[RMDB]
The record gives the reactivity of an RNA of 177 nucleotides to 2A3 and DMS. It was measured as part of the RMDB library OK2TRN.

RNA sequence: GGGAACGACUCGAGUAGAGUCGAAAAACGCCGAAUACGCGGCGAAGACCGAGUGGAAGAAACUGCUCGUCGACAGUACGUUCACGCUCGCGCUGCUGACCGGCAUGAGCGUGCGCACGGUCAGCGAGCGGCGCGAUGGAUUCGUCCAUCGCGCCGCAAAAGAAACAACAACAACAAC
Reactivity to 2A3 in 0.01 (KOAc 150mM, MgCl2 10mM, bicine 150mM(pH8.5), 24C), signal-to-noise 3, nucleotides 027 to 126: a000c020g000c010c000g020a060a100u300a280c150g000c020g090g000c030g010a050a020g040a000c040c050g010a020g030u040g040g080a170a110g070a150a230a060c050u050g020c000u010c060g070u070c040g080a040c000a030g030u060a030c050g020u020u080c030a010c050g000c000u020c010g050c020g000c040u070g030c040u100g050a130c100c030g010g060c040a020u070g030a030g000c070g020u020g020c000g000c020a040c000g000g000u010c000a000g030c020g000a030
Reactivity to DMS in 0.01 (KOAc 150mM, MgCl2 10mM, bicine 150mM(pH8.5), 24C), signal-to-noise 3, nucleotides 027 to 126: a090c030g010c000c010g010a180a140u010a120c200g010c020g000g010c000g010a110a050g000a220c120c020g000a060g020u010g000g000a130a050g020a090a060a120c070u010g000c000u000c030g000u000c050g000a030c000a040g020u010a010c030g000u000u030c010a030c020g020c000u010c000g010c060g000c030u000g010c110u000g010a070c240c050g000g000c010a060u000g020a040g010c020g020u010g010c000g000c030a040c010g000g000u000c010a080g000c000g020a080